[RMDB]
RNA sequence: GGGAACGACUCGAGUAGAGUCGAAAACUUUGGUGAGACCCUAUCUAGUAUAGCAAUCCACCAAGCAGGUGAAUUCACACAAUUCAGGUUCUCAAAGAAAAUGCGCCCUGACUUGACAGGUAUGGUCAUACGCCAUGGGUUUCGACCCAUGGCGUAUAAAAGAAACAACAACAACAAC
Reactivity to DMS in 0.01 (KOAc 150mM, MgCl2 10mM, bicine 150mM(pH8.5), 24C), signal-to-noise 1, nucleotides 027 to 126: c050u020u000u000g000g010u000g010a220g000a000c190c300c000u040a000u100c000u050a250g000u000a000u000a070g000c190a150a110u000c010c000a000c000c000a000a010g060c290a050g000g110u000g050a020a000u050u000c080a180c290a150c260a050a000u000u070c000a010g000g000u000u000c000u000c000a000a130a030g080a030a130a010a050u000g000c050g000c300c000c020u000g000a010c060u000u000g040a050c150a000g000g010u000a000u000g000g000u030c010
Reactivity to 2A3 in 0.01 (KOAc 150mM, MgCl2 10mM, bicine 150mM(pH8.5), 24C), signal-to-noise 2, nucleotides 027 to 126: c000u000u000u120g070g000u000g010a210g000a030c080c050c000u000a000u060c000u030a030g100u100a050u020a020g030c010a060a030u000c040c000a000c000c000a000a010g060c040a010g070g110u100g010a020a040u070u070c000a000c000a000c000a120a000u050u000c030a000g020g020u120u040c000u060c060a060a080a000g140a000a060a030a000u080g040c020g010c030c050c000u010g110a070c010u070u060g050a030c050a030g070g110u200a080u150g060g000u000c010